RNA sequence: GGGAACGACUCGAGUAGAGUCGAAAAGAUAUGGACAAAGGGAGGGGAGGCUGCCAUGUCGGAAACGACAUGGACAGCUCCGAAGAACUUUGUCCUAAGUCAAAAGAAACAGCUUCGGCUGUUUCAAGCUAUGAAAUGAGUUCGCUCAUUUCAUAGCAAAAGAAACAACAACAACAAC
Reactivity to DMS in 0.01 (KOAc 150mM, MgCl2 10mM, bicine 150mM(pH8.5), 24C), signal-to-noise 3, nucleotides 027 to 126: g020a030u010a300u000g010g000a000c000a010a000a000g020g000g010a250g020g000g020g000a070g000g000c000u000g000c130c010a000u000g010u000c000g010g000a150a050a170c000g020a010c010a000u010g000g000a200c000a010g000c000u000c000c000g000a100a070g020a300a250c010u000u000u000g000u000c000c000u000a010a100g010u010c040a040a060a130a150g010a010a020a000c000a000g000c000u000u020c270g040g000c000u000g000u000u000u010c010a050a130
Reactivity to 2A3 in 0.01 (KOAc 150mM, MgCl2 10mM, bicine 150mM(pH8.5), 24C), signal-to-noise 3, nucleotides 027 to 126: g010a020u080a050u160g000g000a010c000a010a010a000g000g010g020a050g050g100g020g020a050g120g040c000u000g010c010c000a010u010g000u010c000g010g020a050a080a040c000g000a000c010a000u000g000g020a000c000a000g000c010u030c000c010g080a140a040g020a010a030c010u070u010u000g000u000c000c000u010a040a020g020u000c030a000a000a040a240g010a010a010a000c000a000g020c020u090u140c280g210g000c000u010g000u020u000u020c000a000a000